[RMDB]
RNA sequence: GGGAACGACUCGAGUAGAGUCGAAAAGGAGCCAUGGGAUCCGUGGAGUACCCGGGAUAUCCCUUCUCCACACUCCUUCCCCCCUGCGGGGCCCCCCCAUAAGAUGGCGAGAAAUCCACUCAUGGGUUACGAGUCGAGUUCGCUCGACUCAAAAGAAACAACAACAACAAC
Reactivity to DMS in 0.01 (KOAc 150mM, MgCl2 10mM, bicine 150mM(pH8.5), 24C), signal-to-noise 6, nucleotides 027 to 129: g010g010a100g050c180c130a110u000g020g030g000a000u050c030c040g050u120g020g030a210g060u060a110c020c020c010g060g000g000a000u000a070u060c050c030c020u010u000c020u000c000c030a050c150a110c070u030c000c000u060u000c020c010c040c030c010c040u040g050c190g030g010g010g040c000c000c000c000c000c000c000a060u050a010a020g000a040u040g030g000c010g010a130g020a050a120a060u020c000c010a030c050u020c050a080u030g010g030g070u010u030a060c120
Reactivity to 2A3 in 0.01 (KOAc 150mM, MgCl2 10mM, bicine 150mM(pH8.5), 24C), signal-to-noise 8, nucleotides 027 to 129: g000g000a010g030c090c050a140u130g010g000g000a020u020c020c010g070u230g030g010a120g150u230a200c010c010c030g030g000g000a200u180a070u170c000c000c010u010u010c020u000c010c000a030c000a020c030u010c020c000u060u150c010c010c000c010c000c050u110g020c160g020g000g000g000c010c010c000c000c000c000c000a020u050a020a030g060a070u070g040g030c030g010a060g040a030a120a010u000c000c000a020c000u030c010a050u040g000g000g000u020u030a060c090
Source: RMDB library 15KLIB, as collected in RNAgym. Structure probing data (DMS and 2A3) for a 170-nucleotide construct. The RNA was probed in 150 mM KOAc, 10 mM MgCl2 and 150 mM bicine (pH 8.5) at 24 C. DMS adducts were read by reverse transcription with MarathonRT.